[RMDB]
RNA sequence: GGGAACGACUCGAGUAGAGUCGAAAAGCAGGGCAAGCCUAUUGGUAUGUUCUUCCCUUAUGACAUCGAACUUGUCACAGGAAAGCAAAAUAUUCUCCUGCGCAAGUAUGGCCGUGGUGGUUAUCACACCUAUUUAUGCCUUCGGGCAUAAAUAGGUAAAAGAAACAACAACAACAAC
Reactivity to DMS in 0.01 (KOAc 150mM, MgCl2 10mM, bicine 150mM(pH8.5), 24C), signal-to-noise 3, nucleotides 027 to 126: g020c270a050g040g000g010c040a030a300g030c020c010u000a100u000u010g010g030u010a070u010g010u000u000c030u010u010c000c000c000u000u010a110u010g010a020c000a030u010c130g000a090a060c050u000u000g000u010c020a040c070a010g000g000a010a030a070g000c260a070a060a110a150u010a090u020u000c100u020c000c000u000g010c090g010c010a020a000g010u000a010u010g000g030c100c060g000u000g020g010u010g010g000u000u010a040u010c080a040c150
Reactivity to 2A3 in 0.01 (KOAc 150mM, MgCl2 10mM, bicine 150mM(pH8.5), 24C), signal-to-noise 2, nucleotides 027 to 126: g060c000a000g000g010g010c000a020a050g000c040c010u170a230u130u300g010g000u040a060u070g040u020u000c000u030u060c030c010c000u020u160a220u050g040a040c030a040u070c080g010a040a030c010u040u000g080u160c030a020c020a040g020g010a010a040a010g100c110a090a080a120a050u150a110u080u070c040u000c060c000u000g010c010g000c000a000a030g040u050a070u050g060g000c010c010g020u050g000g030u020g010g090u110u050a080u150c020a040c010